[RMDB]
RNA sequence: GGGAACGACUCGAGUAGAGUCGAAAAGAUGAUGGGCAAUGGUCGCACCGAGUCACAUCACCAAAACAUAAGUGCGAGAAGACCUACCGCGUGUGGUUGGCGGAUCCCAUUCAAGCUGAUUACGCAAACGACGGAUGGUAUUCGUACCAUCCGUCGUAAAAGAAACAACAACAACAAC
Reactivity to 2A3 in 0.01 (KOAc 150mM, MgCl2 10mM, bicine 150mM(pH8.5), 24C), signal-to-noise 1, nucleotides 027 to 126: g130a080u120g000a000u030g020g000g000c100a220a110u120g010g110u020c020g000c030a020c040c050g000a000g000u000c020a060c020a140u090c020a120c070c070a030a100a000a050c170a070u300a160a000g000u030g000c030g020a020g070a150a020g040a100c000c020u040a010c020c070g070c000g000u140g020u080g100g030u020u020g000g000c000g030g030a180u140c060c010c000a010u080u120c040a060a050g000c000u050g090a160u000u090a000c080g040c090a120a020
Reactivity to DMS in 0.01 (KOAc 150mM, MgCl2 10mM, bicine 150mM(pH8.5), 24C), signal-to-noise 1, nucleotides 027 to 126: g010a080u010g040a020u000g000g000g000c080a160a170u000g030g000u000c010g000c090a160c030c030g010a210g000u000c020a130c110a080u010c080a100c250c020a060a100a100a020c110a080u000a190a010g010u000g000c040g010a050g010a070a160g030a120c020c010u000a160c210c080g000c150g010u000g000u000g000g030u000u000g010g000c020g010g000a070u060c000c010c010a050u000u000c130a050a110g000c060u000g000a070u000u010a040c070g000c070a040a060
This 177-nucleotide RNA was probed chemically with 2A3 and DMS. The RNA was probed in 150 mM KOAc, 10 mM MgCl2 and 150 mM bicine (pH 8.5) at 24 C. The data come from the RNA Mapping Database (RMDB), library OK2TST. For DMS, 689 sequencing reads were counted.